This 177-nucleotide RNA was probed chemically with 2A3. 2A3 is a SHAPE reagent: it acylates the 2'-hydroxyl of flexible nucleotides of all four kinds. Conditions: 150 mM KOAc, 10 mM MgCl2 and 150 mM bicine (pH 8.5), 24 C.

[RMDB]
RNA sequence: GGGAACGACUCGAGUAGAGUCGAAAAUUACCAGCAUUUCUUAGUCCAGAGCCAGGAUUGCAAAGUGGCGCGAUGAUUAUGCAAUAUGCUGCUGCAAGUCUCGUUUCUGAAAAUAAAACUUUAGCGCGUCCGCAACGAAAUUCGUUUCGUUGCGGACAAAAGAAACAACAACAACAAC
Reactivity to 2A3 in 0.01 (KOAc 150mM, MgCl2 10mM, bicine 150mM(pH8.5), 24C), signal-to-noise 1, nucleotides 027 to 126: u040u000a060c000c000a000g100c050a030u040u120u040c000u070u220a000g050u000c160c200a260g020a080g010c000c000a000g000g080a180u090u110g220c020a110a210a130g050u000g000g000c000g000c000g080a100u150g000a030u070u000a020u150g000c000a020a020u130a000u240g040c000u060g020c000u000g100c080a020a020g080u060c000u000c030g030u000u190u000c000u030g150a010a010a010a010u300a000a080a010a000c080u080u130u020a080g130c130g000c000